[RMDB]
RNA sequence: GGGAACGACUCGAGUAGAGUCGAAAAGAUAUGGAGACUUGACAUGAACAGUAUCGGAAACGAUACGGGUUCAACAGCAAGCUCCUAAGUCAAAAGCUUUGGGGAUCGUUCGCGAUCCCCAAAGCAACUAUUCCUACGUCUUCGGACGUAGGAAUAGAAAAGAAACAACAACAACAAC
Reactivity to DMS in 0.01 (KOAc 150mM, MgCl2 10mM, bicine 150mM(pH8.5), 24C), signal-to-noise 2, nucleotides 027 to 126: g000a010u000a300u000g010g010a000g000a170c010u000u020g000a110c060a190u010g000a010a010c000a150g000u010a010u000c000g030g000a060a070a180c000g010a000u000a000c000g000g050g050u000u000c000a030a040c260a150g000c010a000a010g010c030u010c000c010u010a040a080g000u020c030a080a070a080a110g010c000u000u000u000g000g000g000g000a010u000c000g010u000u030c250g020c020g000a010u000c000c000c000c000a020a000a000g000c020a010a030
The record gives the reactivity of an RNA of 177 nucleotides to DMS. Conditions: 150 mM KOAc, 10 mM MgCl2 and 150 mM bicine (pH 8.5), 24 C.